[RMDB]
RNA sequence: GGGAACGACUCGAGUAGAGUCGAAAAGUGGUGUAUUCGUACACCACAAAAAAGAUAUGGAGGAGGAUGAGUGGGACAAUGACGUUAAUCGGAAACGAUUAAUAAGACAGUCCGCAUCUCCUCCUAAGUCAAAAAGCAACGCCUUCGGGCGUUGCAAAGACAGCAUUAUAUUCGUAUAAUGCUGUCUAAAAGAAACAACAACAACAAC
Reactivity to 2A3 in 0.01 (KOAc 150mM, MgCl2 10mM, bicine 150mM(pH8.5), 24C), signal-to-noise 3, nucleotides 027 to 156: g000u000g000g000u010g000u010a030u010u120c170g000u020a000c000a000c020c000a000c000a010a010a000a000a010a000g050a020u040a030u050g000g010a020g020g010a020g080g050a060u070g050a110g190u300g050g040g020a020c050a110a300u090g020a020c040g000u000u000a000a000u000c000g020g000a040a050a040c010g000a000u010u020a000a000u020a020a020g070a030c050a040g080u000c000c000g020c010a050u020c000u000c000c000u010c000c000u000a000a000g010u000c020a130a000a000a000a050g000c010a000a000c000g010c000c030u050u090c220g090g000g000c000g000u000u010g000c000a000a010
Reactivity to DMS in 0.01 (KOAc 150mM, MgCl2 10mM, bicine 150mM(pH8.5), 24C), signal-to-noise 1, nucleotides 027 to 156: g020u000g030g050u010g020u000a020u000u030c240g000u010a030c000a000c000c000a000c010a000a030a080a060a100a110g030a110u000a150u000g000g040a010g030g040a070g010g030a030u000g010a130g020u010g070g020g000a000c010a100a070u000g030a100c130g020u000u010a010a020u000c020g010g000a180a110a220c000g010a020u000u000a000a010u000a080a100g030a220c030a040g010u030c000c010g020c050a060u000c010u000c010c000u000c020c010u000a000a090g030u000c060a110a130a080a140a160g000c000a010a050c000g000c010c000u000u030c300g000g000g040c010g030u000u000g050c000a000a030